The record gives the reactivity of an RNA of 207 nucleotides to 2A3. Conditions: 150 mM KOAc, 10 mM MgCl2 and 150 mM bicine (pH 8.5), 24 C. For 2A3 the reverse transcriptase was SuperScript II with manganese.
[RMDB]
RNA sequence: GGGAACGACUCGAGUAGAGUCGAAAAACCUUUGUGCGACUGGGAGUCGAACAUUGCAGCUCAUUCCCAUUGGGAAUGAGAACUACUGCAAUUCCCGACGAGGAUCAGUCGCACUCUGGUAAACUUCCCGAUGACAGUUCGCUGUCAUCGGGAAGAAGUUAGAUGGGAGCUUCGGCUCCCAUCUAACAAAAGAAACAACAACAACAAC
Reactivity to 2A3 in 0.01 (KOAc 150mM, MgCl2 10mM, bicine 150mM(pH8.5), 24C), signal-to-noise 1, nucleotides 027 to 156: a000c010c000u010u000u000g000u000g000c010g000a000c000u000g000g000g010a020g020u030c020g020a040a020c060a070u000u000g000c020a020g020c020u020c010a000u010u010c000c100c270a300u220u300g000g000g000a010a010u000g010a000g000a000a010c040u300a010c000u000g010c010a000a000u070u100c000c060c010g000a000c000g040a190g000g050a020u010c000a000g000u010c010g000c000a000c000u010c000u010g000g000u060a130a080a010c000u010u000c060c000c000g010a000u000g000a000c020a000g030u100u100c140g100c170u000g000u000c000a000u000c010g000g060g000a000a000g000a000a000